[RMDB]
RNA sequence: GGGAACGACUCGAGUAGAGUCGAAAACACCGGAAUCGCCGGGAUGACCGGGUCCUUUCUUGGAAUAACCCGCUCAAUGCCCGGAAAUUUGGGCGUGCCCCCGCGAGAUCACUAGCCGAGUAGUGUUACAAUGCACCCAGUUCGCUGGGUGCAUUGUAAAAGAAACAACAACAACAAC
Reactivity to 2A3 in 0.01 (KOAc 150mM, MgCl2 10mM, bicine 150mM(pH8.5), 24C), signal-to-noise 1, nucleotides 027 to 126: c050a030c000c000g000g070a050a030u070c030g000c000c020g000g000g020a000u000g010a000c020c010g000g000g050u060c020c010u000u300u200c130u120u130g040g000a020a020u070a110a040c000c000c010g060c030u010c000a060a220u170g030c000c000c000g010g020a040a000a000u030u010u000g070g010g010c040g010u110g000c000c000c000c090c000g030c000g030a080g000a010u070c010a000c040u030a020g000c020c010g080a040g010u090a000g010u040g030u020u000